The data come from the RNA Mapping Database (RMDB), library OK2TRN. This 177-nucleotide RNA was probed chemically with 2A3 and DMS. For DMS the reverse transcriptase was MarathonRT.
RNA sequence: GGGAACGACUCGAGUAGAGUCGAAAACUGCAGGCGCGCAUCGGCGAGCUGACGGCCGCCCGCGACAGCGCCGUCGCCGAGGCCGAGAGGCUGCGCGAACAGGUGACCGAGCUGUCCGCUGAGCGCACACCAAUUCUUGUUUCGACAAGAAUUGGUGAAAAGAAACAACAACAACAAC
Reactivity to 2A3 in 0.01 (KOAc 150mM, MgCl2 10mM, bicine 150mM(pH8.5), 24C), signal-to-noise 2, nucleotides 027 to 126: c030u080g010c080a090g140g000c010g000c000g000c070a140u040c050g020g010c020g080a130g000c030u090g090a060c040g050g000c020c020g010c000c000c010g020c040g060a090c020a030g000c050g100c070c020g020u010c000g000c030c030g130a090g120g000c020c040g070a060g010a010g120g010c030u020g000c020g010c020g020a030a030c050a050g000g010u030g020a040c030c020g020a040g010c040u030g040u090c020c040g000c030u020g020a020g010c010g000c020a010
Reactivity to DMS in 0.01 (KOAc 150mM, MgCl2 10mM, bicine 150mM(pH8.5), 24C), signal-to-noise 3, nucleotides 027 to 126: c030u000g020c140a130g000g000c040g010c020g010c050a100u010c050g000g010c030g000a070g010c010u000g020a120c070g000g010c040c040g020c010c030c050g000c070g000a090c100a090g000c030g020c060c140g010u000c010g020c020c050g010a140g000g010c030c010g000a120g000a150g010g020c000u000g010c100g010c030g000a040a050c120a160g010g000u000g010a050c020c030g000a130g020c020u000g010u010c040c020g010c070u000g020a090g000c010g020c050a240